Chemical mapping of a 207-nucleotide RNA with 2A3 and DMS.
RNA sequence: GGGAACGACUCGAGUAGAGUCGAAAAGAGCGAUUAGACAAAGGGGUAGAGCUACAGAUUAGAUAGCUGUAUAAUCGUUCAAGUUACAUCAAAACAUCUUCAAUAUUUAUUACUUACUUUCCUUUCUGCCAGAGUACGGUAUUCGUACCGUACUCAAUUAGACUUAAACAUUCGUGUUUAAGUCUAAAAAAGAAACAACAACAACAAC
Reactivity to 2A3 in 0.01 (KOAc 150mM, MgCl2 10mM, bicine 150mM(pH8.5), 24C), signal-to-noise 8, nucleotides 027 to 156: g000a000g000c000g000a000u000u010a010g040a050c080a050a110a040g040g030g020g020u070a040g030a010g060c000u010a000c010a030g160a280u110u170a060g120a200u040a000g040c010u010g020u030a030u020a020a010u000c010g000u010u000c020a020a010g030u060u110a070c060a080u140c070a070a100a060a070c020a080u070c080u240u100c090a130a120u080a200u220u170u110a130u140u110a050c040u070u010a040c010u070u080u100c010c020u030u090u070c030u060g070c040c030a040g000a000g000u000a000c000g000g000u010a020u010u070c140g020u000a010c000c000g000u000a000c000u000c000a000a000
Reactivity to DMS in 0.01 (KOAc 150mM, MgCl2 10mM, bicine 150mM(pH8.5), 24C), signal-to-noise 3, nucleotides 027 to 156: g000a050g000c010g010a080u000u000a070g000a080c050a080a080a100g030g030g040g060u000a090g020a060g010c010u010a030c020a160g010a200u010u000a120g010a240u000a030g000c000u010g030u010a050u000a030a050u010c060g020u000u000c040a050a100g010u000u000a050c050a070u010c080a080a070a060a150c050a060u000c040u000u000c040a070a110u010a090u000u010u000a090u030u000a070c030u000u000a060c050u000u000u000c040c050u000u000u000c030u010g010c060c080a170g020a030g030u000a000c000g010g030u000a030u000u010c280g040u000a020c000c010g000u000a000c000u010c000a010a050

Source information:
For DMS the reverse transcriptase was MarathonRT. Reactivities are given for positions 27 through 156.